Structure probing data (DMS and 2A3) for a 207-nucleotide construct. For 2A3, 2,141 sequencing reads were counted. The reactions ran in a buffer of 150 mM KOAc, 10 mM MgCl2 and 150 mM bicine (pH 8.5), at 24 C. It was measured as part of the RMDB library M2RFPK.

[RMDB]
RNA sequence: GGGAACGACUCGAGUAGAGUCGAAAAACGAGGUACGCCUCGAAAAUAUGACCGGUGUCAUAGACUCUAGCACACAGAGGUCGCGUGGGUUCAACUCCCCCCCUUUUCCGAGGGUAUCGGAAACCAAAAAACACAAUUUGGUUCGCCAAAUUGUGAACCCGGUGAAUAAGUUCGCUUAUUCACCGGGAAAAGAAACAACAACAACAAC
Reactivity to DMS in 0.01 (KOAc 150mM, MgCl2 10mM, bicine 150mM(pH8.5), 24C), signal-to-noise 1, nucleotides 027 to 156: a210c070g010a020g040g060u000a120c230g040c010c000u030c010g010a050a080a070a160u000a050u010g010a040c000c070g000g010u000g000u000c040a050u010a090g000a140c030u000c020u000a110g010c040a150c070a170c070a160g000a100g050g010u000c060g000c040g000u040g010g010g000u010u000c050a100a300c040u010c000c010c000c000c000c000c010u000u000u010u010c020c000g040a040g050g000g000u010a070u000c020g040g010a040a000a080c120c040a000a030a040a040a160a090c010a000c020a010a020u000u000u000g000g070u000u000c300g000c030c000a010a030a010u000u000g000u010g000a000a040
Reactivity to 2A3 in 0.01 (KOAc 150mM, MgCl2 10mM, bicine 150mM(pH8.5), 24C), signal-to-noise 3, nucleotides 027 to 156: a010c020g000a010g000g010u060a030c140g060c020c020u010c000g030a050a040a000a060u120a060u060g020a020c040c120g110g040u150g000u070c020a040u020a100g020a070c010u000c030u130a050g040c040a010c010a020c030a120g090a030g130g060u030c010g010c000g030u090g010g020g010u050u120c040a050a070c100u020c010c000c000c000c000c000c000u010u100u000u000c000c000g000a000g000g030g010u080a020u000c000g010g000a000a000a000c020c010a080a000a020a010a070a010c000a000c000a000a000u010u000u000g020g010u030u030c060g030c040c000a000a000a010u010u000g000u000g010a000a010